[RMDB]
RNA sequence: GGGAACGACUCGAGUAGAGUCGAAAAGCCUCCCGUCACGGGUCGGACGGCGCUGCGCUUCGACGCCUUCGAGACGGCGCUCACCCCGCCCGACCAGGGCGAAAAGGACAUGGCGUGGACGAUUGGCUAACACUUACUCUUUCGAGAGUAAGUGUUAAAAAGAAACAACAACAACAAC
Reactivity to 2A3 in 0.01 (KOAc 150mM, MgCl2 10mM, bicine 150mM(pH8.5), 24C), signal-to-noise 4, nucleotides 027 to 126: g010c000c010u020c020c010c000g010u030c020a040c110g080g040g050u090c030g060g020a040c030g010g010c030g000c040u050g000c050g010c080u130u140c030g040a050c050g110c030c010u070u070c020g040a020g010a040c020g010g000c010g000c010u030c010a060c010c000c010c010g000c000c000c000g020a020c020c070a080g000g000g000c000g030a040a050a000a070g060g000a030c020a070u090g030g000c060g030u090g020g030a030c040g080a140u050u170g040g000c010
Reactivity to DMS in 0.01 (KOAc 150mM, MgCl2 10mM, bicine 150mM(pH8.5), 24C), signal-to-noise 9, nucleotides 027 to 126: g010c040c030u000c050c040c010g010u000c050a100c100g000g010g020u000c060g010g010a100c090g000g010c070g010c050u000g000c110g010c030u000u010c030g020a100c230g000c090c080u010u000c040g010a070g000a140c120g010g000c020g010c020u000c110a150c120c070c080c030g010c010c000c000g000a110c130c100a140g000g000g000c020g000a050a050a080a080g000g010a090c080a080u000g000g000c020g010u000g000g010a060c100g000a090u000u000g010g010c080